[RMDB]
RNA sequence: GGGAACGACUCGAGUAGAGUCGAAAAGAUAUGGACACCGAACUACAACGAUUCAUUCUGAUGACCGUCGCUUUACAUCGGAAACGAUGUAAAGCGACGCAAGGAAUGGGUUGCGGUGUCCUAAGUCCGUAUAACUGCAGUUCGCUGCAGUUAUACGAAAAGAAACAACAACAACAAC
Reactivity to 2A3 in 0.01 (KOAc 150mM, MgCl2 10mM, bicine 150mM(pH8.5), 24C), signal-to-noise 2, nucleotides 027 to 126: g040a060u120a070u210g010g020a000c000a020c020c030g120a180a120c240u300a180c290a300a090c090g070a070u060u100c000a020u010u000c010u070g300a300u220g100a200c030c130g000u010c000g000c000u020u000u000a010c000a000u000c000g100g000a090a070a070c020g010a000u000g000u000a000a000a000g010c010g000a000c000g020c010a010a040g000g000a000a000u010g000g030g010u020u060g190c000g000g000u000g040u000c000c000u000a010a000g000u010c040
Reactivity to DMS in 0.01 (KOAc 150mM, MgCl2 10mM, bicine 150mM(pH8.5), 24C), signal-to-noise 2, nucleotides 027 to 126: g000a120u010a300u010g000g030a050c000a010c000c000g010a210a110c160u050a240c300a130a300c110g000a060u000u000c000a020u000u020c010u010g000a100u000g000a090c300c020g020u000c000g040c000u000u020u000a010c020a000u000c000g010g010a090a160a170c000g000a030u000g010u000a010a010a030g010c000g020a000c030g020c000a030a110g010g020a010a000u000g000g000g030u000u000g010c030g000g020u000g010u000c000c010u000a010a080g000u000c020
An RNA of 177 nucleotides, treated with 2A3 and DMS and read out base by base. For DMS, 1,307 sequencing reads were counted. For DMS the reverse transcriptase was MarathonRT. The data come from the RNA Mapping Database (RMDB), library TTRINS. The RNA was probed in 150 mM KOAc, 10 mM MgCl2 and 150 mM bicine (pH 8.5) at 24 C.